RNA sequence: GGGAACGACUCGAGUAGAGUCGAAAAAAGACGUACGGACGGUGUUUGCGUGAGUGCCAGCAAACCUACACUUGCGGUUGCCAAUCUCAGAUUUACGACCUAGGCGGCUAGGUCAGCGUGGUGGUAAAGCCCCCAUUUAAUUCGUUAAAUGGGGGCUAAAAGAAACAACAACAACAAC
Reactivity to 2A3 in 0.01 (KOAc 150mM, MgCl2 10mM, bicine 150mM(pH8.5), 24C), signal-to-noise 2, nucleotides 027 to 126: a000a000g130a010c090g010u080a010c010g030g000a000c010g000g010u060g040u120u080u050g050c020g030u110g030a110g010u160g070c020c020a000g000c000a020a100a070c000c030u050a030c050a010c070u020u050g040c070g010g070u050u080g030c030c000a070a000u000c020u050c070a110g020a090u130u130u260a030c070g000a000c000c000u000a000g090g000c010g030g070c070u000a050g000g000u000c000a000g000c020g010u060g000g000u080g000g020u060a090a040
Reactivity to DMS in 0.01 (KOAc 150mM, MgCl2 10mM, bicine 150mM(pH8.5), 24C), signal-to-noise 3, nucleotides 027 to 126: a090a030g010a090c080g040u000a020c040g000g000a050c100g000g010u020g000u000u000u020g000c090g030u000g000a100g020u000g010c090c050a110g000c050a030a040a070c050c050u010a100c120a070c030u010u010g000c080g030g010u010u000g010c030c060a040a040u020c000u020c030a060g020a060u020u000u030a070c080g010a020c040c000u010a010g000g010c210g000g000c000u000a000g020g000u000c030a030g000c060g010u000g020g010u000g000g010u020a100a080